[RMDB]
RNA sequence: GGGAACGACUCGAGUAGAGUCGAAAAGAUAUGGACAUGUAAGCGAUAAGAGCACCGUCGGAAACGACGGGCUCUUUUGACGUAUCAUGUCCUAAGUCAAAGUUUCCCCGGUUCGCCGGGGAAACAAGAUGAAGGAUAGGUUCGCCUAUCCUUCAUCAAAAGAAACAACAACAACAAC
Reactivity to DMS in 0.01 (KOAc 150mM, MgCl2 10mM, bicine 150mM(pH8.5), 24C), signal-to-noise 5, nucleotides 027 to 126: g000a030u000a200u000g000g000a020c010a000u000g000u000a100a190g010c010g020a150u010a020a010g000a020g000c000a120c000c000g030u000c000g010g010a040a050a100c000g010a000c000g000g000g010c000u000c000u000u000u000u000g010a120c030g000u000a140u000c010a000u000g000u000c000c000u000a010a070g000u000c010a080a130a140g000u000u000u000c000c000c000c000g000g010u010u010c250g020c010c010g000g010g010g000a000a000a000c010a050a090
Reactivity to 2A3 in 0.01 (KOAc 150mM, MgCl2 10mM, bicine 150mM(pH8.5), 24C), signal-to-noise 4, nucleotides 027 to 126: g000a010u030a010u080g000g000a000c010a000u030g030u120a300a300g080c010g080a160u170a300a020g010a010g020c110a210c300c000g000u000c000g000g000a040a030a010c000g000a000c000g000g000g010c010u000c020u020u000u010u050g020a010c010g000u000a020u080c000a000u000g000u010c000c000u010a030a000g000u000c040a180a050a030g000u010u000u000c000c000c010c000g000g090u040u080c300g040c060c000g000g000g000g000a000a000a000c000a010a020
The record gives the reactivity of an RNA of 177 nucleotides to DMS and 2A3.
For DMS the reverse transcriptase was MarathonRT.
The RNA was probed in 150 mM KOAc, 10 mM MgCl2 and 150 mM bicine (pH 8.5) at 24 C.
Values cover nucleotides 27 to 126.